Record summary:
This 177-nucleotide RNA was probed chemically with DMS and 2A3. 2A3 adducts were read by reverse transcription with SuperScript II with manganese. Conditions: 150 mM KOAc, 10 mM MgCl2 and 150 mM bicine (pH 8.5), 24 C. The DMS profile rests on 3,669 reads.
RNA sequence: GGGAACGACUCGAGUAGAGUCGAAAAGAUAUGGAGCCCAUGGGAGAUCCAGGAUCGGAAACGAUCCUCGGAUCAUCGAUCAUGGGACCCUCCUAAGUCAAAAGCGUAACUCUUCGGAGUUACGCAAGAUUUCUUACAACUUCGGUUGUAAGAAAUCAAAAGAAACAACAACAACAAC
Reactivity to DMS in 0.01 (KOAc 150mM, MgCl2 10mM, bicine 150mM(pH8.5), 24C), signal-to-noise 3, nucleotides 027 to 126: g010a030u000a020u010g000g000a030g000c000c000c000a010u000g000g000g010a010g020a010u000c000c020a020g000g000a020u000c000g030g010a010a010a050c000g010a000u000c000c000u010c160g030g010a010u000c000a170u000c200g000a020u010c000a010u000g000g000g010a140c220c230c020u010c000c010u010a000a160g000u000c010a080a060a080a150g010c000g010u000a000a000c000u000c000u000u020c170g030g010a000g010u000u000a000c000g010c000a010a010
Reactivity to 2A3 in 0.01 (KOAc 150mM, MgCl2 10mM, bicine 150mM(pH8.5), 24C), signal-to-noise 1, nucleotides 027 to 126: g000a000u010a000u030g000g000a010g020c030c000c000a010u010g010g000g000a020g000a000u000c000c010a010g000g000a010u010c010g000g010a030a000a000c000g000a010u000c010c010u000c060g000g000a000u010c000a010u090c000g000a000u010c000a000u000g000g000g020a030c050c010c000u000c000c000u000a000a000g010u000c030a010a050a100a120g000c000g000u000a000a020c000u010c010u060u120c300g150g000a000g010u000u000a000c000g010c000a000a000